Chemical mapping of a 177-nucleotide RNA with 2A3 and DMS. For 2A3, 1,391 sequencing reads were counted. In probing experiments dimethyl sulfate is read out at A N1 and C N3, which are open when not base-paired. 2A3 adducts were read by reverse transcription with SuperScript II with manganese.
[RMDB]
RNA sequence: GGGAACGACUCGAGUAGAGUCGAAAAAACGUUUGAUUCAAUAUCUGUUACGCAAAAUGGGCUCAAGUGUUUGAUAAUAUUCGGAAUGCUCUAUUCCAACCAACUGUGUUCAAACGGAGUGACGUUAAUUAGUCAGGUGAUUCGUCACCUGACUAAUAAAAGAAACAACAACAACAAC
Reactivity to 2A3 in 0.01 (KOAc 150mM, MgCl2 10mM, bicine 150mM(pH8.5), 24C), signal-to-noise 2, nucleotides 027 to 126: a000a000c130g000u120u020u050g120a140u090u100c100a060a030u040a050u200c020u060g040u040u100a030c020g030c050a000a040a070a240u100g000g000g020c050u030c070a050a040g110u050g090u170u040u020g070a030u090a210a040u080a150u060u130c040g000g010a060a010u040g020c000u020c010u120a040u060u000c030c010a010a020c010c000a020a040c080u030g030u010g030u190u060c060a020a020a010c040g040g000a070g020u070g010a030c010g030u000u020a080
Reactivity to DMS in 0.01 (KOAc 150mM, MgCl2 10mM, bicine 150mM(pH8.5), 24C), signal-to-noise 4, nucleotides 027 to 126: a050a030c050g010u000u000u000g020a090u000u010c070a110a080u000a090u000c020u010g010u000u000a090c090g030c080a020a030a060a100u000g000g000g000c040u000c080a070a070g010u000g010u010u010u000g000a120u010a070a060u010a130u000u010c110g000g000a070a040u000g010c130u010c100u000a090u010u000c010c020a090a090c070c060a050a060c140u010g010u000g000u000u000c060a010a050a060c080g010g010a100g020u000g010a080c060g010u000u000a060